The record gives the reactivity of an RNA of 177 nucleotides to 2A3 and DMS. The RNA was probed in 150 mM KOAc, 10 mM MgCl2 and 150 mM bicine (pH 8.5) at 24 C. For DMS, 1,649 sequencing reads were counted.

RNA sequence: GGGAACGACUCGAGUAGAGUCGAAAAUCAUGCACGUUCGCGUGCAUGAAAAGGCGGCGAGUAUCGCUCAGCGGCGCGCUACAGCGCGGAGCGCAGCUGGAAAAAGAUGAAUCUUCGGAUUCAUCAAUCUCUGAAUAAGCUUCGGCUUAUUCAGAGAAAAAGAAACAACAACAACAAC
Reactivity to 2A3 in 0.01 (KOAc 150mM, MgCl2 10mM, bicine 150mM(pH8.5), 24C), signal-to-noise 1, nucleotides 027 to 126: u010c010a010u000g010c000a000c000g010u050u060c160g030c010g100u040g000c000a000u000g000a000a000a000a000g080g020c010g010g010c040g080a040g060u070a110u210c060g000c010u000c050a030g120c050g150g010c020g000c000g000c060u100a110c040a100g110c090g000c050g140g030a060g000c030g000c020a030g000c000u050g000g030a150a020a000a000a000g010a010u010g000a000a000u010c020u080u100c200g100g010a020u000u010c000a000u000c000a000a030
Reactivity to DMS in 0.01 (KOAc 150mM, MgCl2 10mM, bicine 150mM(pH8.5), 24C), signal-to-noise 2, nucleotides 027 to 126: u000c010a010u000g010c000a000c010g020u000u010c200g030c000g020u000g010c010a000u000g000a000a080a090a180g000g010c070g000g000c000g010a150g010u000a070u010c020g000c010u000c020a020g000c020g050g000c010g020c020g020c060u000a070c100a180g020c150g000c050g010g000a080g020c000g030c050a080g010c010u010g000g000a050a080a110a150a140g000a010u000g000a010a000u000c010u000u020c220g040g000a010u000u000c000a000u000c000a090a070

The data come from the RNA Mapping Database (RMDB), library M2PK50.
For 2A3, 1,428 sequencing reads were counted.